[RMDB]
RNA sequence: GGGAACGACUCGAGUAGAGUCGAAAAGAUAUGGAUCGUGACGGGAGAUGCUCGGAAACGAGGCAUCGAAGAACGUCCGAUCCUAAGUCAAAACCGUGAGACUACUGUUCGCAGUAGUCUCACGGAAGUUUGUUUCAUAGUUCGCUAUGAAACAAACAAAAGAAACAACAACAACAAC
Reactivity to DMS in 0.01 (KOAc 150mM, MgCl2 10mM, bicine 150mM(pH8.5), 24C), signal-to-noise 4, nucleotides 027 to 126: g010a050u020a300u010g000g000a000u000c000g010u020g020a010c010g010g000g000a120g010a000u000g000c000u000c000g020g010a100a080a230c020g010a030g030g010c000a000u000c000g000a080a120g010a110a190c010g000u000c000c010g000a010u000c000c000u000a000a060g010u000c020a100a060a130a150c000c000g000u000g000a020g010a010c000u000a000c000u000g000u000u010c200g010c010a020g000u000a000g000u000c000u000c000a000c000g000g000a000a020
Reactivity to 2A3 in 0.01 (KOAc 150mM, MgCl2 10mM, bicine 150mM(pH8.5), 24C), signal-to-noise 5, nucleotides 027 to 126: g020a010u050a020u150g000g010a000u010c050g180u300g050a010c010g010g020g020a050g010a010u010g000c010u000c040g010g040a060a090a060c030g020a060g220g180c010a010u020c000g010a090a000g010a030a010c000g000u000c000c010g000a000u000c000c000u000a060a010g060u050c040a010a010a090a150c000c000g000u000g000a010g000a000c000u010a010c000u020g060u110u150c300g010c180a010g000u000a000g000u010c010u000c000a010c020g000g010a000a000